RNA sequence: GGGAACGACUCGAGUAGAGUCGAAAAGAAUUGGGAGGGUGUGGUCCUGCUCUUCUGAAAGGGCCGAUUUGUUAAGAGAGAUUUCCUGGGGAAGGAAAGUGGUCGGAACAACUGUCCCCCACCCCUCGUCAUGAGACGUGUUCGCACGUCUCAUGACAAAAGAAACAACAACAACAAC
Reactivity to DMS in 0.01 (KOAc 150mM, MgCl2 10mM, bicine 150mM(pH8.5), 24C), signal-to-noise 1, nucleotides 027 to 126: g010a050a120u010u000g000g010g000a080g000g010g030u010g030u000g010g020u010c070c030u010g000c070u010c130u010u000c200u010g010a030a110a060g010g010g010c010c030g010a090u010u000u000g010u000u000a050a070g000a110g010a100g010a120u000u000u000c010c010u020g010g040g020g000a170a030g000g000a020a030a060g010u000g000g000u010c030g030g000a020a040c070a010a060c300u000g000u000c010c030c000c030c010a170c030c010c000c020u000c080
Chemical mapping of a 177-nucleotide RNA with DMS. The DMS profile rests on 1,388 reads. Conditions: 150 mM KOAc, 10 mM MgCl2 and 150 mM bicine (pH 8.5), 24 C. Source: RMDB library OK2TST, as collected in RNAgym. Reactivities are given for positions 27 through 126.